[RMDB]
RNA sequence: GGGAACGACUCGAGUAGAGUCGAAAACGCUGGGAUUGAAACCAAGCACUUUGAUGACCGUAUGAGCGCGUACUGAAGCGCGCACGGUACGCCCAUACGCAAGAAGUGUCAAAGUUCAAUCCUGUGCUGAAGCGCGCACGGCAACCGAAAGGUGCGAGAUUGCAGGGGAGUUCGCUCCCCUGCAAUCAAAAGAAACAACAACAACAAC
Reactivity to 2A3 in 0.01 (KOAc 150mM, MgCl2 10mM, bicine 150mM(pH8.5), 24C), signal-to-noise 2, nucleotides 027 to 156: c050g030c030u030g000g010g020a010u010u000g050a070a030a060c050c020a130a050g020c000a010c010u070u030u060g220a300u150g040a150c050c030g000u000a010u010g080a090g040c190g020c000g020u000a000c010u030g070a220a090g010c000g000c000g020c000a000c010g000g000u000a000c020g010c000c010c030a000u000a000c000g000c050a130a180g020a010a010g000u000g090u120c080a140a090a000g020u020u000c000a000a000u000c000c000u000g020u020g010c000u040g010a100a040g000c000g000c000g000c020a000c050g050g000c000a040a010c030c000g040a110a050a000g030g000u000g010c010g010a120
The data come from the RNA Mapping Database (RMDB), library RNAMAK. This 207-nucleotide RNA was probed chemically with 2A3. Values are in units of 0.01, from 0 to 300, in steps of 10. 2A3 is a SHAPE reagent: it acylates the 2'-hydroxyl of flexible nucleotides of all four kinds.